[RMDB]
RNA sequence: GGGAACGACUCGAGUAGAGUCGAAAAGAAUACGCGUCGACGAAUAUUGUUCUGAGUACUUUUUUUAAGUACUCUUUGUAUGGCUAUGUAGAGUUAUACUUUACAUUGGAUAUUAUUCGUCGUUGCAGGGUAGCGAAGUCUUCGGAUUUCGCUACCCAAAAGAAACAACAACAACAAC
Reactivity to 2A3 in 0.01 (KOAc 150mM, MgCl2 10mM, bicine 150mM(pH8.5), 24C), signal-to-noise 8, nucleotides 027 to 126: g070a050a070u230a110c120g000c000g010u010c000g000a000c000g020a000a000u020a010u010u090g040u070u040c050u060g000a000g010u000a000c000u020u040u050u070u060u110u250a000a000g000u000a000c000u000c000u020u010u020g040u020a220u050g050g030c020u000a040u140g070u110a050g010a030g160u050u100a090u050a100c000u040u040u010a040c020a050u040u140g010g010a000u010a010u080u010a000u020u000c000g000u000c000g000u010u020g000c010a010
Reactivity to DMS in 0.01 (KOAc 150mM, MgCl2 10mM, bicine 150mM(pH8.5), 24C), signal-to-noise 3, nucleotides 027 to 126: g000a140a110u040a070c180g000c010g010u000c000g000a020c010g010a030a010u010a000u020u010g010u000u000c070u020g000a020g010u000a000c000u000u000u010u020u040u020u030a020a000g000u000a000c000u000c000u000u000u000g020u010a050u020g000g000c050u000a030u040g020u020a020g000a040g020u010u040a100u040a230c000u000u010u010a030c080a030u020u020g010g000a020u010a000u010u000a000u000u000c000g010u000c010g020u000u030g010c010a130